Structure probing data (DMS) for a 177-nucleotide construct. Values cover nucleotides 27 to 126.
[RMDB]
RNA sequence: GGGAACGACUCGAGUAGAGUCGAAAACGAGCGGCUUUGUCCGCUUCGCCGGAAGCACGGUUGGGAUCCGAAUCGAACAGCGUCAGGUCCAGAUGUUGCGAGGUCGAAGGCACGUUGACACCGGAGACAGAGUACGGUUCUUCGGAACCGUACUCUGAAAAGAAACAACAACAACAAC
Reactivity to DMS in 0.01 (KOAc 150mM, MgCl2 10mM, bicine 150mM(pH8.5), 24C), signal-to-noise 1, nucleotides 027 to 126: c180g000a030g030c000g010g030c010u010u010u010g010u020c030c000g030c010u000u020c040g030c020c020g000g010a110a110g030c060a040c050g000g000u000u000g000g000g010a090u000c030c050g030a060a130u000c080g050a140a130c080a050g010c050g030u000c050a120g000g010u000c040c040a140g020a020u010g010u000u000g050c000g020a170g040g000u000c020g020a130a140g030g010c000a030c070g030u000u010g000a040c120a080c030c000g020g000a300g010a220
Conditions: 150 mM KOAc, 10 mM MgCl2 and 150 mM bicine (pH 8.5), 24 C. Source: RMDB library OK2TST, as collected in RNAgym.